Annotation: The record gives the reactivity of an RNA of 177 nucleotides to 2A3 and DMS.
[RMDB]
RNA sequence: GGGAACGACUCGAGUAGAGUCGAAAAGAAGGUGCAUUGUAGAGACCCUGCCCUCUGGGUGAGCUGACCAUUGGUCUAGGAUGGGGUCAGCUGGGGUCAGGCCACAGUUCUUGGAGGGGAGACAGACCGGUAGUGGUUGGUUCGCCAACCACUACCGAAAAGAAACAACAACAACAAC
Reactivity to 2A3 in 0.01 (KOAc 150mM, MgCl2 10mM, bicine 150mM(pH8.5), 24C), signal-to-noise 1, nucleotides 027 to 126: g120a000a010g020g010u120g000c020a050u100u220g160u150a040g020a000g010a130c000c000c020u050g040c000c060c020u130c080u180g000g000g000u110g010a000g020c040u010g020a000c010c000a060u030u040g050g000u070c070u120a080g130g030a090u150g010g010g140g050u020c000a000g010c000u000g000g000g000g000u000c000a030g010g050c020c000a020c070a050g080u130u060c030u020u080g000g000a010g000g010g030g000a040g010a030c000a030g100a020c000
Reactivity to DMS in 0.01 (KOAc 150mM, MgCl2 10mM, bicine 150mM(pH8.5), 24C), signal-to-noise 1, nucleotides 027 to 126: g000a040a080g000g040u010g000c120a070u040u050g000u020a030g020a160g000a060c000c010c020u000g000c040c000c030u010c120u020g010g000g010u000g010a050g020c000u000g000a010c010c000a060u040u000g040g000u020c030u030a090g000g000a190u000g000g020g010g000u000c010a000g030c000u000g000g000g020g000u000c000a070g020g020c060c040a000c050a230g000u000u000c020u000u000g020g000a120g030g010g020g000a090g030a090c140a070g000a110c130
For 2A3, 752 sequencing reads were counted. The RNA was probed in 150 mM KOAc, 10 mM MgCl2 and 150 mM bicine (pH 8.5) at 24 C. The DMS profile rests on 1,516 reads. DMS adducts were read by reverse transcription with MarathonRT.